[RMDB]
RNA sequence: GGGAACGACUCGAGUAGAGUCGAAAAGUCUUGCUGCAACAUGGUGUCGAUUAACAGACUGUGUGCUUGAUCUUGUAAAUCAUGAGCAAGGCCACGAUUCGCACGUACACAGAUGUUAUAAGCCAAAUGAGUCGAUAUGCUUCGGCAUAUCGACUCAAAAAGAAACAACAACAACAAC
Reactivity to DMS in 0.01 (KOAc 150mM, MgCl2 10mM, bicine 150mM(pH8.5), 24C), signal-to-noise 2, nucleotides 027 to 126: g020u000c010u000u000g030c000u000g020c130a080a160c110a110u030g050g010u000g000u000c030g030a200u000u000a050a040c030a060g050a140c000u000g010u000g020u000g030c100u000u000g020a080u000c130u030u000g010u000a040a060a120u000c030a090u000g000a110g000c010a010a010g010g010c050c020a090c090g000a020u000u000c070g010c040a010c090g020u000a030c020a000c000a010g040a230u000g000u000u000a010u000a100a210g060c010c080a040a050a050
Reactivity to 2A3 in 0.01 (KOAc 150mM, MgCl2 10mM, bicine 150mM(pH8.5), 24C), signal-to-noise 2, nucleotides 027 to 126: g000u020c010u000u030g010c010u030g040c040a090a020c020a180u120g030g020u060g070u180c080g070a140u030u060a020a030c000a000g300a160c020u020g000u020g020u020g000c000u000u060g000a050u100c120u100u010g040u050a050a110a100u140c080a090u130g000a000g060c000a020a010g010g020c000c000a010c040g020a020u100u050c060g020c030a070c060g000u020a000c020a000c010a000g020a020u020g000u000u010a140u020a050a010g030c030c030a030a020a090
Conditions: 150 mM KOAc, 10 mM MgCl2 and 150 mM bicine (pH 8.5), 24 C. An RNA of 177 nucleotides, treated with DMS and 2A3 and read out base by base. The 2A3 profile rests on 1,273 reads. For DMS the reverse transcriptase was MarathonRT. Reactivities are given for positions 27 through 126. The DMS profile rests on 1,106 reads.